[RMDB]
Source: RMDB library OK3TST, as collected in RNAgym. Chemical mapping of a 207-nucleotide RNA with DMS and 2A3. The 2A3 profile rests on 766 reads. DMS adducts were read by reverse transcription with MarathonRT. High 2A3 reactivity points to a flexible backbone, as in loops and unpaired stretches. 2A3 adducts were read by reverse transcription with SuperScript II with manganese.
RNA sequence: GGGAACGACUCGAGUAGAGUCGAAAAACAUAGGACCAAUAUGAGAUAAAGGUAUAUCUUGCUUAGAAUAAUUCAUUUCUCUCUUCAGGGAAAGUAAUAAUAACAGCCAAGUUAGAGUGCUAUAUGAAUGGGUACCAAGCGCUGACCUGUCAUUGACAUCAUGGCAGUUUUUCGAAACUGCCAUGAUAAAAGAAACAACAACAACAAC
Reactivity to DMS in 0.01 (KOAc 150mM, MgCl2 10mM, bicine 150mM(pH8.5), 24C), signal-to-noise 1, nucleotides 027 to 156: a090c070a130u000a140g010g000a170c000c020a090a180u000a090u010g010a140g000a200u000a030a090a090g020g000u000a060u020a040u000c000u010u000g000c040u000u000a050g030a120a090u000a130a120u000u000c020a110u000u000u000c010u010c010u010c090u000u000c060a040g030g000g010a060a030a090g010u000a030a110u000a020a060u010a020a100c060a070g010c000c030a000a120g060u000u000a050g000a050g070u010g010c020u010a070u000a110u000g000a100a070u000g020g040g000u000a090c040c010a060a130g000c030g000c040u020g040a060c060c030u040g010u000c030a110u000u010g020a130c120
Reactivity to 2A3 in 0.01 (KOAc 150mM, MgCl2 10mM, bicine 150mM(pH8.5), 24C), signal-to-noise 2, nucleotides 027 to 156: a000c040a050u170a080g010g070a050c030c000a050a090u230a090u220g100a050g020a070u130a070a220a080g040g000u060a140u020a020u110c020u080u050g000c040u010u050a010g040a080a060u100a120a030u040u070c050a080u040u020u000c010u030c020u030c050u150u220c130a030g000g000g040a000a000a000g070u030a000a060u090a100a010u060a100a030c030a020g030c010c010a050a000g040u000u070a010g080a010g050u070g000c040u030a020u030a050u250g110a120a000u120g020g050g000u050a010c020c050a070a010g010c020g000c070u030g000a040c000c000u080g010u070c050a060u070u300g090a080c030